RNA sequence: GGGAACGACUCGAGUAGAGUCGAAAACAUCUCUUUUGGUUUCAACUUUUGUCAUCUAGAGAGUGCCAUUGUAGUACUACCCAAGGAUAGCAUGUCCUUUGAGACCAGAGGGGAGGCGAUGACAGGAGUCAUCACAUAUGUUCGCAUAUGUGAUGACAAAAGAAACAACAACAACAAC
Reactivity to DMS in 0.01 (KOAc 150mM, MgCl2 10mM, bicine 150mM(pH8.5), 24C), signal-to-noise 5, nucleotides 027 to 126: c080a100u000c020u000c010u000u000u000u000g000g000u000u010u000c030a030a060c300u000u000u000u000g010u000c040a020u000c010u010a130g010a110g010a050g020u000g010c010c030a160u000u010g020u000a110g030u000a020c030u000a110c040c020c050a120a100g000g010a020u000a060g010c060a030u010g000u010c160c140u000u000u000g010a030g010a030c010c010a020g000a020g010g000g000g000a030g020g010c080g000a070u000g000a110c070a090g010g010a250
Reactivity to 2A3 in 0.01 (KOAc 150mM, MgCl2 10mM, bicine 150mM(pH8.5), 24C), signal-to-noise 5, nucleotides 027 to 126: c060a130u010c000u000c000u020u010u020u030g040g000u020u030u040c030a030a030c020u140u140u070u120g060u080c020a020u010c030u080a060g020a010g000a010g220u010g000c030c010a240u090u250g110u190a130g000u000a000c010u120a170c020c020c030a060a050g050g000a010u020a050g070c060a040u080g060u080c030c000u030u030u010g020a030g000a010c000c000a000g010a020g020g000g040g010a010g060g020c120g090a090u100g050a040c020a050g030g080a050